[RMDB]
Chemical mapping of a 177-nucleotide RNA with 2A3 and DMS. It was measured as part of the RMDB library OK1LIB. The reactions ran in a buffer of 150 mM KOAc, 10 mM MgCl2 and 150 mM bicine (pH 8.5), at 24 C.
RNA sequence: GGGAACGACUCGAGUAGAGUCGAAAAAUGUUGGCUCAUCUCGUUGAGGAAUGUAAUAACUACUUGUUAUUAACCUGUUUUUGUGCCAUCUAUAGUGGAGAGCUUAUUGCAAUUUGUAAAAAUAAAAAGUCCAUAAUUAGUUCGCUAAUUAUGGACUAAAAGAAACAACAACAACAAC
Reactivity to 2A3 in 0.01 (KOAc 150mM, MgCl2 10mM, bicine 150mM(pH8.5), 24C), signal-to-noise 8, nucleotides 027 to 126: a000u250g020u050u050g010g000c010u010c020a040u000c030u010c050g120u070u140g070a030g010g070a130a070u190g040u140a000a010u010a010a010c050u220a020c080u160u290g000u000u010a020u030u010a040a050c000c000u030g080u030u040u000u040u080g040u030g000c000c000a020u010c060u090a100u060a200g090u090g040g060a100g020a040g070c040u120u100a110u210u220g020c050a100a110u040u040u060g080u190a110a050a050a040a060u190a060a150a030a070
Reactivity to DMS in 0.01 (KOAc 150mM, MgCl2 10mM, bicine 150mM(pH8.5), 24C), signal-to-noise 5, nucleotides 027 to 126: a060u020g020u000u010g000g000c020u000c020a080u020c070u010c050g020u030u010g010a070g010g000a110a060u040g020u010a000a010u000a000a020c010u040a150c280u010u020g010u010u000a010u000u000a040a090c040c040u010g000u010u000u000u010u010g000u000g000c030c010a020u000c050u030a090u020a110g000u030g010g010a070g000a150g000c020u010u020a050u000u010g010c070a070a080u020u010u020g000u040a000a070a070a060a090u040a040a070a090a110
2A3 adducts were read by reverse transcription with SuperScript II with manganese. For DMS the reverse transcriptase was MarathonRT.